[RMDB]
RNA sequence: GGGAACGACUCGAGUAGAGUCGAAAAAGGCCGGCCAACAGUGGCUGGCGCGUACAAGUGGAGGCCGGCCUCCACUCACACGUACGUUGCGCAUACAAAUUGAGGCCGGCCUCAGGUGGCCUCGACGCGCUCACUUACCAUUCGUGGUAAGUGAGCGAAAAGAAACAACAACAACAAC
Reactivity to 2A3 in 0.01 (KOAc 150mM, MgCl2 10mM, bicine 150mM(pH8.5), 24C), signal-to-noise 2, nucleotides 027 to 126: a000g060g000c030c030g000g020c000c020a080a080c050a150g150u040g050g000c070u040g090g000c010g000c000g000u010a000c000a030a070g030u020g080g000a010g010g010c170c070g090g220c020c000u000c000c020a000c000u020c030a110c010a010c090g010u020a020c030g020u010u270g110c090g000c100a030u200a120c070a020a100a050u150u100g000a010g000g000c000c020g000g000c030c010u000c000a000g020g010u020g040g010c010c010u040c030g000a050c000g000
Reactivity to DMS in 0.01 (KOAc 150mM, MgCl2 10mM, bicine 150mM(pH8.5), 24C), signal-to-noise 1, nucleotides 027 to 126: a060g010g000c000c000g000g020c000c000a050a130c300a230g030u000g000g020c030u000g010g010c010g010c000g000u090a030c070a090a170g000u020g000g010a000g010g040c040c020g000g000c020c000u000c000c120a070c120u010c090a020c150a120c100g000u000a110c040g000u000u000g000c000g030c080a160u010a050c140a030a020a180u030u000g000a010g000g000c000c000g000g010c000c000u030c000a050g000g000u030g040g010c030c010u000c070g000a210c200g020

Structure probing data (2A3 and DMS) for a 177-nucleotide construct. 2A3 adducts were read by reverse transcription with SuperScript II with manganese.